RNA sequence: GGGAACGACUCGAGUAGAGUCGAAAAAGUGCAUUCCGAGUAAUUCAGCACGAGUACCUGGUUUUGGCUUCGACGAGGGGUGGCCAGGCACUGGAGCAUGUGCUGCUCACGUGGUGACUGGUGAUUGGUUGUGAGAUCCAAUCACAUGCUUCUCGGGCGUCUCGUGUAUAUUCGUAUACACGAGACGAAAAGAAACAACAACAACAAC
Reactivity to DMS in 0.01 (KOAc 150mM, MgCl2 10mM, bicine 150mM(pH8.5), 24C), signal-to-noise 1, nucleotides 027 to 156: a070g040u000g010c010a130u010u000c000c020g000a100g030u000a070a140u010u000c020a040g020c000a070c060g000a140g060u000a010c000c000u060g000g000u000u000u000u000g000g030c040u000u000c030g000a190c070g030a180g000g000g000g020u010g010g010c030c010a000g000g020c000a010c040u000g010g010a120g040c050a060u000g000u000g010c090u000g030c070u000c030a300c100g000u000g020g070u000g020a090c100u000g000g000u000g020a130u000u000g010g000u000u000g020u020g040a190g000a170u000c030c030a040a040u000c010a030c030a140u000g000c000u000u000c000u000c020g030g030g030
Reactivity to 2A3 in 0.01 (KOAc 150mM, MgCl2 10mM, bicine 150mM(pH8.5), 24C), signal-to-noise 3, nucleotides 027 to 156: a010g160u130g040c020a090u100u060c020c010g000a010g000u080a060a130u070u070c030a040g050c000a010c010g020a040g000u030a040c000c000u010g080g000u030u050u120u220g220g000c010u020u020c050g120a160c110g020a150g000g010g030g010u030g040g000c000c010a000g000g040c030a010c030u030g050g000a010g000c030a040u140g070u150g170c090u030g020c020u020c000a050c010g050u070g140g120u020g030a070c050u090g100g000u010g020a010u010u010g000g040u070u090g100u090g100a070g040a050u040c000c000a000a010u020c000a010c000a010u070g040c030u020u060c000u010c000g030g000g010